[RMDB]
RNA sequence: GGGAACGACUCGAGUAGAGUCGAAAAUAGAAGGGCAACCUUAUGCAGUAGUAAAGUAGUCCCUCUGGUCCAUUGUAAUGUCGACCAAGAACAGUUUCAGGUGGGGAGUUUGGCUGGGGCGGCACAUAAUUUGCCGGUAGUUCGCUACCGGCAAAUUAAAAGAAACAACAACAACAAC
Reactivity to 2A3 in 0.01 (KOAc 150mM, MgCl2 10mM, bicine 150mM(pH8.5), 24C), signal-to-noise 1, nucleotides 027 to 126: u190a000g090a010a070g000g010g010c050a050a000c040c000u000u000a030u140g020c040a090g160u210a010g060u030a060a220a000g000u030a000g100u120c000c000c000u000c040u000g000g000u000c030c000a000u010u250g190u280a070a170u100g010u000c080g000a000c000c000a030a050g040a070a050c090a000g010u030u210u130c010a000g000g100u040g170g030g000g000a100g010u030u170u030g000g000c000u000g000g000g000g060c020g000g000c010a000c000a060u230
Reactivity to DMS in 0.01 (KOAc 150mM, MgCl2 10mM, bicine 150mM(pH8.5), 24C), signal-to-noise 1, nucleotides 027 to 126: u000a000g000a110a060g000g010g000c120a080a060c120c010u030u010a040u000g000c140a000g000u000a060g000u030a010a020a110g000u000a030g020u040c020c040c000u040c080u020g030g010u070c000c070a090u010u050g020u010a040a040u010g010u000c100g000a070c060c020a010a100g000a070a150c180a180g000u000u000u020c000a090g000g000u000g010g010g000g000a150g000u000u010u000g000g000c080u020g020g040g000g060c040g000g000c100a060c210a120u040
Annotation
Structure probing data (2A3 and DMS) for a 177-nucleotide construct. 2A3 adducts were read by reverse transcription with SuperScript II with manganese.